The record gives the reactivity of an RNA of 177 nucleotides to DMS and 2A3.
It was measured as part of the RMDB libraries RFM100 and RFMREP.
Reactivities are rounded to 0.1 and cut off at 0 and 3.
The RNA was probed in 150 mM KOAc, 10 mM MgCl2 and 150 mM bicine (pH 8.5) at 24 C.
[RMDB]
RNA sequence: GGGAACGACUCGAGUAGAGUCGAAAACAAACCGUGAAAGCGUGGCCUAUCGAUCCUUUAGUUCUUUUGAAUUUUAAGCUAGAGGUGUCAGAAAAGUUACCACAGGGAUAACUGGCUUGUGGCAGCCACGUCAGGUAAAGUUCGCUUUACCUGACGUAAAAGAAACAACAACAACAAC
Reactivity to DMS in 0.01 (KOAc 150mM, MgCl2 10mM, bicine 150mM(pH8.5), 24C), signal-to-noise 5, nucleotides 027 to 126: c150a080a080a150c080c020g010u010g010a070a080a130g020c050g010u000g010g010c040c030u010a140u020c100g000a040u010c010c010u010u000u000a010g000u010u010c090u000u010u020u020g010a110a110u030u010u030u010a040a050g010c010u000a020g010a000g000g000u010g000u000c030a080g000a030a050a050a090g020u010u010a090c020c000a030c020a050g000g000g000a100u010a050a100c220u020g010g000c020u000u000g020u010g000g020c090a080g010c020c020
Reactivity to 2A3 in 0.01 (KOAc 150mM, MgCl2 10mM, bicine 150mM(pH8.5), 24C), signal-to-noise 6, nucleotides 027 to 126: c040a010a040a010c040c020g030u080g100a110a040a000g040c050g040u040g020g050c000c030u070a090u080c040g040a010u020c010c000u000u020u000a040g020u150u070c060u020u100u050u110g130a190a180u110u100u110u210a050a010g010c010u000a010g000a000g040g010u090g040u020c020a010g070a020a060a010a000g030u030u060a010c000c000a010c000a020g010g010g040a080u090a180a100c040u060g160g000c000u040u030g010u020g060g020c030a000g030c020c010